[RMDB]
RNA sequence: GGGAACGACUCGAGUAGAGUCGAAAAGUUCCCUCUUAGCGUGGAGGUUUAACUACGCUCGUUCCCCAUAUCGGUGUGGGCGCACCGGAUUUAUACAUCAAAGUCCUUUAGGGAACGGAAAGGAACAAAAAUCCAUGGGAGUUCGCUCCCAUGGAAAGCCAAUGGAAUAGUUCGCUAUUCCAUUGGCAAAAGAAACAACAACAACAAC
Reactivity to 2A3 in 0.01 (KOAc 150mM, MgCl2 10mM, bicine 150mM(pH8.5), 24C), signal-to-noise 2, nucleotides 027 to 156: g000u000u010c000c000c010u020c020u000u070a000g010c010g000u020g010g060a070g000g040u150u170u140a050a050c000u000a000c000g020c030u020c000g000u000u010c000c020c000c020a020u070a030u150c000g000g000u000g000u010g040g040g000c040g000c000a000c000c000g020g000a000u020u110u090a120u080a090c110a060u060c100a040a130a000g060u050c000c000u050u130u230a090g020g020g050a040a060c050g020g000a050a050a020g020g020a070a010c020a030a040a090a000a030u000c000c000a000u000g000g000g000a020g000u040u020c070g040c080u000c000c000c000a000u000g000g000a000a000a000
Reactivity to DMS in 0.01 (KOAc 150mM, MgCl2 10mM, bicine 150mM(pH8.5), 24C), signal-to-noise 2, nucleotides 027 to 156: g020u000u000c010c000c020u000c060u000u000a010g000c040g050u010g030g000a090g020g030u000u000u000a080a100c020u000a030c000g050c050u010c000g000u000u000c040c010c010c060a150u000a040u000c030g020g010u000g050u000g000g010g000c040g030c020a030c040c000g030g000a100u000u000u000a090u010a170c120a170u010c090a100a160a160g000u000c020c020u020u000u000a090g040g050g000a070a070c030g010g000a040a020a090g000g050a080a120c070a010a020a130a110a240u000c000c000a040u000g000g040g000a040g010u000u000c300g000c000u000c000c000c030a000u020g000g000a010a010a090